[RMDB]
RNA sequence: GGGAACGACUCGAGUAGAGUCGAAAAGAUAUGGACACCGAGGGACAUGAGGAAUAUUCGGAAACGAAUAUACCUCAACAGCCCUCCGGUGUCCUAAGUCAAAGGCCAAUGGUUCGCCAUUGGCCAAGUAACUACGACUGUUCGCAGUCGUAGUUACAAAAGAAACAACAACAACAAC
Reactivity to DMS in 0.01 (KOAc 150mM, MgCl2 10mM, bicine 150mM(pH8.5), 24C), signal-to-noise 2, nucleotides 027 to 126: g000a020u010a110u000g000g010a010c000a000c000c000g020a020g010g000g010a030c110a110u010g020a010g010g010a300a030u000a000u000u000c020g020g000a050a010a070c000g000a040a010u000a000u000a120c020c000u000c000a030a060c300a230g000c010c000c000u000c060c050g010g010u000g000u000c000c000u010a000a010g000u010c000a110a130a140g010g010c000c000a010a010u000g000g010u000u000c300g010c000c000a010u000u000g000g020c000c000a000a030
Reactivity to 2A3 in 0.01 (KOAc 150mM, MgCl2 10mM, bicine 150mM(pH8.5), 24C), signal-to-noise 1, nucleotides 027 to 126: g000a010u050a020u050g000g000a000c000a000c000c020g010a010g030g000g000a060c220a300u300g000a020g000g000a050a010u010a010u000u000c000g000g000a040a020a000c000g020a010a010u010a020u010a050c010c000u000c000a040a060c070a040g010c000c000c000u000c000c030g000g000u000g000u000c000c000u010a000a000g000u000c020a050a010a150g000g010c000c000a000a000u020g000g090u080u130c300g040c170c000a000u020u000g010g000c000c000a000a000
Source: RMDB library TTRDES, as collected in RNAgym. This 177-nucleotide RNA was probed chemically with DMS and 2A3. For DMS the reverse transcriptase was MarathonRT.